[RMDB]
An RNA of 177 nucleotides, treated with 2A3 and DMS and read out base by base. The 2A3 profile rests on 1,862 reads. For DMS, 3,376 sequencing reads were counted.

RNA sequence: GGGAACGACUCGAGUAGAGUCGAAAACUCACCUUCUCCCCUGCCCACGGAAACGAUAUGACCCACAACAGCCCCACGCACAUGCACCGGGUUCGCAGAGAUUACACAGCUAAUACAUGUGAGUAGGCCCAUGCUAAUGAUUCGUCAUUAGCAUGGGAAAAGAAACAACAACAACAAC
Reactivity to 2A3 in 0.01 (KOAc 150mM, MgCl2 10mM, bicine 150mM(pH8.5), 24C), signal-to-noise 1, nucleotides 027 to 126: c010u000c010a050c000c030u030u020c000u030c020c000c000c000u000g010c000c020c000a020c000g040g000a050a070a030c040g000a000u020a070u250g100a050c010c040c000a050c020a030a160c000a080g020c040c000c020c010a010c000g050c000a040c020a070u050g020c030a020c020c010g060g000g000u070u060c010g000c010a020g070a030g010a100u030u130a030c060a000c010a040g000c020u020a010a010u060a120c020a040u110g020u010g020a010g030u000a010g040g030
Reactivity to DMS in 0.01 (KOAc 150mM, MgCl2 10mM, bicine 150mM(pH8.5), 24C), signal-to-noise 4, nucleotides 027 to 126: c030u000c020a100c090c070u000u000c030u000c000c010c010c030u010g000c030c020c020a100c060g000g000a050a070a100c080g010a100u000a100u010g010a100c030c030c000a060c080a060a060c110a090g010c010c030c020c010a090c100g000c030a060c070a050u010g010c060a100c070c050g000g010g040u010u010c040g010c050a060g000a140g010a080u010u000a060c060a070c080a090g010c040u010a040a070u010a050c070a060u000g000u010g010a050g020u000a080g020g010
Values cover nucleotides 27 to 126. The reactions ran in a buffer of 150 mM KOAc, 10 mM MgCl2 and 150 mM bicine (pH 8.5), at 24 C. DMS adducts were read by reverse transcription with MarathonRT.